Structure probing data (2A3 and DMS) for a 207-nucleotide construct. For DMS the reverse transcriptase was MarathonRT. The reactions ran in a buffer of 150 mM KOAc, 10 mM MgCl2 and 150 mM bicine (pH 8.5), at 24 C. For DMS, 1,911 sequencing reads were counted.
[RMDB]
RNA sequence: GGGAACGACUCGAGUAGAGUCGAAAAGAAUUGGUAUGUACGCUACUUCUUCCAGUAGCUGCGUCAUAACAUCAAGGUUAUGCAUACUGAGCCGAAGCUCAGCUUCGGUCCUCCAAGGAAGACCAAAUACAGCUCAGCCCGUUCGCGGGCUGAGCAACAACCUUGAUUUGUUCGCAAAUCAAGGUUGAAAAGAAACAACAACAACAAC
Reactivity to 2A3 in 0.01 (KOAc 150mM, MgCl2 10mM, bicine 150mM(pH8.5), 24C), signal-to-noise 2, nucleotides 027 to 156: g060a010a080u010u020g020g000u010a000u000g000u010a000c070g000c000u000a000c000u110u120c010u010u000c020c010a010g000u000a000g000c020u000g000c010g020u030c000a000u000a000a000c010a070u240c200a120a030g180g000u010u000a010u010g010c010a010u010a010c000u010g000a000g000c010c010g000a000a000g000c010u050c300a030g010c020u030u000c000g000g000u000c000c010u040c030c030a050a040g000g000a000a000g010a000c040c060a060a050a020u180a080c080a010g000c000u000c000a000g010c030c000c010g080u130u140c200g040c020g050g000g010c010u000g000a000g030c000a000a010
Reactivity to DMS in 0.01 (KOAc 150mM, MgCl2 10mM, bicine 150mM(pH8.5), 24C), signal-to-noise 1, nucleotides 027 to 156: g030a070a070u010u000g010g040u000a010u010g020u000a070c000g000c040u000a030c000u000u000c030u000u000c150c110a270g020u000a010g010c000u000g000c030g030u000c020a000u000a050a060c000a250u020c100a190a210g020g020u000u000a050u000g010c020a090u010a040c000u000g000a090g020c010c000g000a060a050g020c010u000c000a150g010c000u000u000c050g010g030u000c010c040u000c060c020a070a170g060g000a060a010g000a140c050c080a020a060a130u000a060c060a130g000c010u000c020a030g050c010c000c010g020u000u000c300g020c060g100g000g000c010u030g000a000g000c000a030a030